[RMDB]
RNA sequence: GGGAACGACUCGAGUAGAGUCGAAAACAUCAUUCACAAGUUUACAAACAGUAUCAGGACGCAAUGCUUGUAAUGCUCGGAUAGAGGAUGCCGCUUUGUGACGGGCCCUUUUUUCCAACCAGUGACCUAUGUAGAACCAGUUCGCUGGUUCUACAUAAAAAGAAACAACAACAACAAC
Reactivity to 2A3 in 0.01 (KOAc 150mM, MgCl2 10mM, bicine 150mM(pH8.5), 24C), signal-to-noise 1, nucleotides 027 to 126: c050a040u130c050a060u140u120c010a020c020a040a080g040u050u120u200a100c090a050a140a010c020a040g070u060a070u190c100a030g000g130a040c090g020c050a000a130u070g010c010u000u030g000u100a040a060u040g050c060u060c060g050g020a070u060a050g040a030g000g010a060u110g170c000c000g120c030u060u050u180g130u140g100a100c030g030g110g040c040c030c060u000u110u090u000u080u090c020c000a010a060c000c000a000g030u010g140a060c000c020
Reactivity to DMS in 0.01 (KOAc 150mM, MgCl2 10mM, bicine 150mM(pH8.5), 24C), signal-to-noise 2, nucleotides 027 to 126: c070a100u010c070a090u000u000c040a050c060a100a040g010u000u000u010a050c100a100a040a110c070a070g010u000a110u010c130a070g010g010a100c130g000c060a050a040u010g010c050u000u000g000u000a030a040u010g000c110u000c110g000g000a090u000a040g010a050g000g000a050u000g000c050c030g000c060u010u000u000g020u000g010a040c050g000g010g000c050c000c010u000u000u000u020u000u010c020c020a060a090c140c100a110g020u010g020a050c110c080